[RMDB]
RNA sequence: GGGAACGACUCGAGUAGAGUCGAAAAGCCGACUUUAACACAUUGCUUCCAUUUGCUCUUGCUACGGCAUCUUCUGACGGUAUCAUUUCUGUAUUUGAUUGCCGGUAUCCGAGCACUGCCGUCCGAAGGUAUGGCGUACCUUCGGGUACGCCAUACCAAAAGAAACAACAACAACAAC
Reactivity to 2A3 in 0.01 (KOAc 150mM, MgCl2 10mM, bicine 150mM(pH8.5), 24C), signal-to-noise 3, nucleotides 027 to 126: g040c020c010g020a040c060u170u110u170a140a030c040a010c010a140u040u120g040c050u090u000c030c010a070u070u040u150g000c020u030c020u080u120g000c020u040a020c000g030g000c040a080u060c020u090u000c040u060g030a030c020g000g000u020a010u090c020a070u030u070u060c110u140g300u230a180u000u050u090g070a100u060u120g010c020c000g010g030u010a030u020c030c020g010a010g000c020a020c050u020g000c000c010g010u040c000c020g060a080a030
Reactivity to DMS in 0.01 (KOAc 150mM, MgCl2 10mM, bicine 150mM(pH8.5), 24C), signal-to-noise 2, nucleotides 027 to 126: g000c070c000g020a110c070u000u000u000a090a090c100a080c100a110u000u000g010c080u010u000c020c020a080u000u000u010g010c050u000c080u000u000g010c080u010a030c040g010g020c020a030u010c020u000u000c050u000g000a070c040g010g040u010a060u000c100a050u010u000u010c140u000g020u020a060u010u000u020g000a030u010u000g020c010c010g000g000u010a070u000c100c180g010a050g000c050a070c070u000g010c000c030g010u000c040c030g020a060a110